Chemical mapping of a 177-nucleotide RNA with 2A3 and DMS. For 2A3 the reverse transcriptase was SuperScript II with manganese. For DMS, 1,543 sequencing reads were counted. The reactions ran in a buffer of 150 mM KOAc, 10 mM MgCl2 and 150 mM bicine (pH 8.5), at 24 C. Source: RMDB library OK2TRN, as collected in RNAgym. For DMS the reverse transcriptase was MarathonRT.
[RMDB]
RNA sequence: GGGAACGACUCGAGUAGAGUCGAAAAACGUGUCAUCUAGCAGACGUUGCAUCACUGAAUCAUAUUUCUGAAUGAAACGGUUCAGUGCUUCAAUAGCUGAAUUAAAACGUGAUGUAAUAUCAGACAGGCACUCUCAGAUAUUCGUAUCUGAGAGUGCAAAAGAAACAACAACAACAAC
Reactivity to 2A3 in 0.01 (KOAc 150mM, MgCl2 10mM, bicine 150mM(pH8.5), 24C), signal-to-noise 2, nucleotides 027 to 126: a000c040g030u030g030u050c000a030u050c090u070a000g020c000a000g080a060c040g010u000u010g020c000a000u000c000a010c000u000g000a000a000u050c010a000u020a200u180u080u000c040u100g300a210a160u230g000a040a060a010c070g000g000u040u000c000a000g000u000g000c010u030u010c030a050a050u040a050g050c010u010g000a060a060u090u100a090a090a010a010c050g020u040g010a010u060g010u090a150a020u050a060u170c010a000g070a100c010a020g180
Reactivity to DMS in 0.01 (KOAc 150mM, MgCl2 10mM, bicine 150mM(pH8.5), 24C), signal-to-noise 2, nucleotides 027 to 126: a130c080g010u000g030u010c070a080u000c090u010a130g030c020a040g010a050c100g000u010u000g000c090a010u000c000a010c000u000g000a020a020u000c020a060u010a170u000u000u010c010u010g020a190a130u000g010a010a020a020c280g000g000u000u000c010a000g030u000g010c080u000u010c030a030a010u000a180g010c010u000g000a090a060u000u000a020a110a090a110c110g000u010g000a050u000g000u010a040a130u000a090u000c090a090g000a170c210a020g010